RNA sequence: GGGAACGACUCGAGUAGAGUCGAAAAGGAAUACCAAUACUCGUGUGUCUAGGUAUACUAGCACAGCUCGCCACCGCCUGCGCCGCGGCGCGGAUGGGACUGCCGAGCUCACAACUACCGCGGCCACGUUUGGAGGAUCUUUCGAGAUCCUCCAAACAAAAGAAACAACAACAACAAC
Reactivity to DMS in 0.01 (KOAc 150mM, MgCl2 10mM, bicine 150mM(pH8.5), 24C), signal-to-noise 2, nucleotides 027 to 126: g050g010a160a120u000a280c030c010a050a130u000a060c130u010c080g030u010g040u030g010u000c010u000a070g000g000u000a040u050a120c110u000a040g010c050a070c150a010g010c010u000c030g010c050c020a150c000c000g060c030c040u000g020c040g020c040c030g030c190g070g010c090g030c040g000g000a000u010g010g000g010a100c170u010g000c300c060g000a050g000c020u000c130a100c040a100a060c130u000a070c010c000g040c120g000g010c030c280a040c090
Reactivity to 2A3 in 0.01 (KOAc 150mM, MgCl2 10mM, bicine 150mM(pH8.5), 24C), signal-to-noise 1, nucleotides 027 to 126: g080g030a080a130u060a130c040c000a080a040u120a130c060u040c070g090u050g030u020g110u140c000u030a010g120g000u130a130u060a300c000u010a000g010c030a010c030a040g000c000u010c010g140c010c010a030c000c000g050c020c060u170g000c040g040c020c010g000c040g040g000c080g000c000g000g030a040u050g000g000g090a080c090u090g110c140c030g000a000g000c000u030c000a110c010a000a220c050u100a030c000c010g020c030g000g010c010c000a010c010
Source: RMDB library OK2TRN, as collected in RNAgym. Chemical mapping of a 177-nucleotide RNA with DMS and 2A3. For 2A3 the reverse transcriptase was SuperScript II with manganese. The 2A3 profile rests on 1,056 reads. The RNA was probed in 150 mM KOAc, 10 mM MgCl2 and 150 mM bicine (pH 8.5) at 24 C.